[RMDB]
RNA sequence: GGGAACGACUCGAGUAGAGUCGAAAACGUACCAGGUUCGCCUGGUACGAAAAAGAUAUGGACCACUGUACUUCGCUUGGAUUUACUGUCGGAAACGACAGUUGUCAGCGAACGUAUUGGUCCUAAGUCAAAAAAGGGCACGCUUCGGCGUGCCCAAGUGCUAUUAUCGGUUCGCCGAUAAUAGCACAAAAGAAACAACAACAACAAC
Reactivity to 2A3 in 0.01 (KOAc 150mM, MgCl2 10mM, bicine 150mM(pH8.5), 24C), signal-to-noise 1, nucleotides 027 to 156: c010g010u000a010c000c000a000g040g030u060u070c190g110c070c010u000g010g000u000a000c000g000a020a000a000a010a010g090a010u090a050u170g000g000a000c000c000a040c200u160g050u020a000c000u010u010c000g080c050u110u150g160g000a060u180u190u280a020c000u000g000u000c000g000g100a100a050a020c010g000a000c000a000g010u000u000g000u000c000a000g000c000g010a010a000c060g020u030a010u020u040g000g000u010c000c000u010a000a010g010u020c010a000a090a020a090a000a000g020g000g000c030a010c000g000c010u060u110c190g070g000c030g000u000g000c010c000c000a000a000